[RMDB]
RNA sequence: GGGAACGACUCGAGUAGAGUCGAAAACGUCGUGAACUAGCGACAAUGCGUUAGAUCCAUCGUUAUCUAACCGAAACAUCGUGACUAGUCGUAGAAUAGAACCAGGAGAGGGCGCUGGCAAACAAAGACUAGGUGUCUGAUUCGUCGGACGCCUAGUAAAAGAAACAACAACAACAAC
Reactivity to DMS in 0.01 (KOAc 150mM, MgCl2 10mM, bicine 150mM(pH8.5), 24C), signal-to-noise 9, nucleotides 027 to 126: c090g000u010c050g020u010g010a130a090c050u000a080g000c040g000a060c080a100a070u030g010c150g010u000u000a010g000a020u010c090c090a130u030c220g010u040u010a030u010c020u000a020a020c010c040g010a130a090a130c170a080u010c070g010u010g010a090c030u000a030g000u000c030g010u030a070g000a070a070u020a060g010a080a100c040c030a060g000g000a090g000a070g000g000g010c020g000c020u010g000g000c070a050a050a070c130a070a080a090g000
Reactivity to 2A3 in 0.01 (KOAc 150mM, MgCl2 10mM, bicine 150mM(pH8.5), 24C), signal-to-noise 9, nucleotides 027 to 126: c050g020u020c010g030u050g070a100a050c040u020a040g020c010g030a010c010a020a050u140g030c080g010u000u000a000g000a020u010c060c030a190u080c140g100u130u040a010u000c000u000a000a010c020c010g030a040a080a010c040a070u090c050g050u040g060a040c020u020a020g020u030c030g040u050a030g030a090a030u100a060g040a050a030c010c010a020g010g040a070g020a040g020g020g000c020g000c010u010g010g010c020a050a060a030c040a050a130a020g090
An RNA of 177 nucleotides, treated with DMS and 2A3 and read out base by base. The 2A3 profile rests on 60,734 reads. The reactions ran in a buffer of 150 mM KOAc, 10 mM MgCl2 and 150 mM bicine (pH 8.5), at 24 C. DMS adducts were read by reverse transcription with MarathonRT. It was measured as part of the RMDB library OK1LIB. For 2A3 the reverse transcriptase was SuperScript II with manganese. For DMS, 66,264 sequencing reads were counted.